[RMDB]
The data come from the RNA Mapping Database (RMDB), library OK3TST. Chemical mapping of a 207-nucleotide RNA with 2A3 and DMS. For DMS the reverse transcriptase was MarathonRT. Conditions: 150 mM KOAc, 10 mM MgCl2 and 150 mM bicine (pH 8.5), 24 C.

RNA sequence: GGGAACGACUCGAGUAGAGUCGAAAACAACCUGGGAGUUACGUCCGGAUAUUGCCCCAGGAGCAAUAGAACGGUAGACAUCAACUGAUGCGAGAGCAUCUCAACUUAUGGACCUUAGUGUAUCGCAAGACGACAGGUCCUGUCGGAAUUGCGUAGACCCAUAGCUAAAUUUCGAUUUAGCUAUGGGAAAAGAAACAACAACAACAAC
Reactivity to 2A3 in 0.01 (KOAc 150mM, MgCl2 10mM, bicine 150mM(pH8.5), 24C), signal-to-noise 4, nucleotides 027 to 156: c020a000a060c000c000u010g040g000g000a100g030u080u090a030c050g060u030c040c020g000g010a070u040a040u080u090g030c030c000c000c020a060g050g030a050g020c010a020a060u040a040g070a100a050c030g000g020u020a040g070a100c010a050u100c050a080a120c080u100g000a010u000g000c020g000a040g000a010g030c000a020u000c000u000c050a050a060c030u090u050a030u190g040g040a040c010c020u080u160a100g030u050g060u130a060u150c020g000c000a000a010g020a020c000g000a000c000a020g180g140u100c070c020u000g010u000c000g010g060a190a040u000u010g000c000g000u000a020g050a020
Reactivity to DMS in 0.01 (KOAc 150mM, MgCl2 10mM, bicine 150mM(pH8.5), 24C), signal-to-noise 3, nucleotides 027 to 156: c120a050a300c020c000u000g000g000g000a180g040u010u000a080c070g030u010c010c020g040g010a240u000a010u000u010g020c050c000c020c130a250g030g000a070g020c020a020a040u010a030g020a070a130c020g010g000u000a120g000a070c100a110u000c090a100a140c060u010g020a030u000g030c000g050a270g000a300g050c020a040u000c010u000c030a060a130c150u000u000a080u010g030g010a020c000c010u000u010a110g030u010g030u000a050u000c020g010c090a110a200g020a240c020g020a080c100a010g010g030u000c030c020u000g020u000c050g000g000a130a210u000u000g000c000g000u000a140g020a190